Overview: Conditions: 150 mM KOAc, 10 mM MgCl2 and 150 mM bicine (pH 8.5), 24 C. This 177-nucleotide RNA was probed chemically with 2A3 and DMS.
RNA sequence: GGGAACGACUCGAGUAGAGUCGAAAAUGACUUCCGAGGUCGCCUCCCAGCAGCCUACAUCCCCAGCUGCUUACCUCUCUCCCAUCAUGCUCUAGUAGUGCUAUCAUGGGCAAACACAGUAGCUGACUAAGGUCAAAAAAUUCGUUUUUUGACCUUAAAAAGAAACAACAACAACAAC
Reactivity to 2A3 in 0.01 (KOAc 150mM, MgCl2 10mM, bicine 150mM(pH8.5), 24C), signal-to-noise 9, nucleotides 027 to 126: u190g010a010c010u060u010c010c010g010a030g070g100u040c010g010c010c000u040c000c010c010a010g020c000a000g010c000c010u060a070c040a110u070c010c000c000c010a000g010c010u020g000c000u010u070a080c010c010u040c010u010c010u010c010c010c000a040u060c010a020u100g010c010u010c010u030a090g040u040a020g030u090g060c020u060a050u190c030a050u080g010g020g000c030a070a090a010c030a010c010a080g080u060a010g010c030u020g020a030c020
Reactivity to DMS in 0.01 (KOAc 150mM, MgCl2 10mM, bicine 150mM(pH8.5), 24C), signal-to-noise 9, nucleotides 027 to 126: u040g000a040c030u000u010c050c010g010a090g010g000u010c010g000c120c070u000c010c010c010a080g000c040a050g010c020c030u010a090c140a120u000c020c020c020c040a140g000c020u000g000c030u000u020a090c090c040u000c030u010c050u010c010c010c020a080u020c100a070u010g000c020u010c020u010a110g010u010a080g020u000g010c030u000a060u010c090a070u010g010g000g010c160a050a080a090c110a070c100a050g010u000a030g010c020u000g000a200c160